[RMDB]
RNA sequence: GGGAACGACUCGAGUAGAGUCGAAAAAGGACGAAAGCCGUGUCGCCGACCGUCCUCAGCACCGCCGCCAGGCUGCCCGGCUGCUUGUAGGCAUCGAUGCCGAAGGCCAGCGACAGGGCGAUCAGCAUCCUACCCACUGAUUCGUCAGUGGGUAGGAAAAAGAAACAACAACAACAAC
Reactivity to DMS in 0.01 (KOAc 150mM, MgCl2 10mM, bicine 150mM(pH8.5), 24C), signal-to-noise 2, nucleotides 027 to 126: a060g050g030a030c070g010a070a300a140g030c020c040g000u020g010u020c090g030c080c000g020a200c150c020g000u010c000c040u010c080a140g000c110a060c030c040g010c040c010g000c030c090a110g000g000c010u000g010c020c010c000g020g030c020u010g000c010u020u000g010u000a090g010g000c040a100u000c210g000a190u010g050c000c000g000a070a180g000g000c160c090a030g010c010g020a100c080a060g000g030g000c020g000a040u000c080a090g010c050a190
Reactivity to 2A3 in 0.01 (KOAc 150mM, MgCl2 10mM, bicine 150mM(pH8.5), 24C), signal-to-noise 1, nucleotides 027 to 126: a060g030g020a030c050g060a000a020a040g040c110c070g270u100g050u150c020g000c050c020g020a080c040c000g030u040c020c000u000c000a030g030c020a020c050c060g000c020c000g070c040c030a040g050g010c030u090g000c000c060c000g080g000c000u000g000c030u020u050g050u120a000g000g030c020a070u110c090g140a170u210g040c010c000g010a020a000g040g000c000c080a000g000c030g070a070c030a180g000g050g000c000g000a030u040c000a000g080c000a020